[RMDB]
RNA sequence: GGGAACGACUCGAGUAGAGUCGAAAAAUGAUUGGGUUGAAUUCCUUCGCGCGCAACUUGCUGCGCUGGGAAUUGAGGAUGCCAAUGCUGUUGACGAGGCCAUCAAGGCUGAGCUUGAGCGUCAGCGGUGCCGGAUGAUAUUCGUAUCAUCCGGCACAAAAGAAACAACAACAACAAC
Reactivity to DMS in 0.01 (KOAc 150mM, MgCl2 10mM, bicine 150mM(pH8.5), 24C), signal-to-noise 3, nucleotides 027 to 126: a070u010g010a090u000u000g000g000g030u000u000g000a060a000u000u000c000c000u000u010c300g030c000g020c020g000c020a290a130c210u020u040g000c020u060g050c020g000c010u000g000g000g000a000a000u000u030g010a150g040g020a070u010g030c030c000a010a020u000g030c030u020g010u000u000g000a040c070g000a210g020g010c010c030a130u030c090a070a160g020g010c050u000g000a190g000c040u020u000g000a140g030c060g000u000c030a020g010c020g000
Reactivity to 2A3 in 0.01 (KOAc 150mM, MgCl2 10mM, bicine 150mM(pH8.5), 24C), signal-to-noise 3, nucleotides 027 to 126: a010u300g010a020u040u030g000g060g010u000u170g090a000a000u000u020c000c000u010u050c170g010c000g000c010g010c020a120a300c300u160u270g000c080u130g000c020g010c000u000g000g000g000a000a000u010u030g020a040g080g020a040u110g200c020c000a000a010u040g020c030u010g010u060u050g020a050c070g030a040g000g070c030c010a120u180c060a130a070g030g020c110u160g000a000g020c080u070u070g040a030g060c000g030u030c020a020g010c020g110

Chemical mapping of a 177-nucleotide RNA with DMS and 2A3. Reactivities are given for positions 27 through 126. DMS adducts were read by reverse transcription with MarathonRT. It was measured as part of the RMDB library OK1LIB.